Record summary
The data come from the RNA Mapping Database (RMDB), library M2PK50. This 177-nucleotide RNA was probed chemically with 2A3 and DMS.
RNA sequence: GGGAACGACUCGAGUAGAGUCGAAAAGAGUAGUAGUUCGCUACUACUCAAAGGCACAAAAGGCACAGAUCUAAAGUGCAUGGAACACGCCAAGUGCCCGUGAAAGUAAAUCCUUCGGGAUUUACAACCCUUGAUAACGGUUCGCCGUUAUCAAGGGAAAAGAAACAACAACAACAAC
Reactivity to 2A3 in 0.01 (KOAc 150mM, MgCl2 10mM, bicine 150mM(pH8.5), 24C), signal-to-noise 2, nucleotides 027 to 126: g000a010g000u020a000g000u010a000g000u020u050c290g050c110u000a000c000u000a000c010u000c000a000a010a010g000g000c020a010c010a020a180a020a090g050g010c030a020c010a030g140a190u080c040u250a070a150a050g020u010g010c030a020u070g050g010a100a080c040a020c050g040c000c000a040a020g030u020g000c000c000c040g040u060g130a080a030a000g000u000a000a000a000u000c000c010u020u040c260g040g000g010a000u000u000u000a000c010a000a050
Reactivity to DMS in 0.01 (KOAc 150mM, MgCl2 10mM, bicine 150mM(pH8.5), 24C), signal-to-noise 2, nucleotides 027 to 126: g000a010g000u000a000g010u000a010g020u000u010c210g010c000u010a000c000u020a000c000u000c000a030a110a100g030g010c010a040c110a060a080a150a090g020g020c020a040c040a140g000a080u010c180u020a060a070a080g030u010g000c050a120u010g000g020a110a080c150a030c100g010c010c020a060a220g000u010g010c010c010c060g000u000g020a080a070a130g000u000a000a000a000u000c010c010u000u010c140g010g010g000a010u020u000u000a000c000a050a130
2A3 adducts were read by reverse transcription with SuperScript II with manganese. The reactions ran in a buffer of 150 mM KOAc, 10 mM MgCl2 and 150 mM bicine (pH 8.5), at 24 C. For DMS, 1,059 sequencing reads were counted.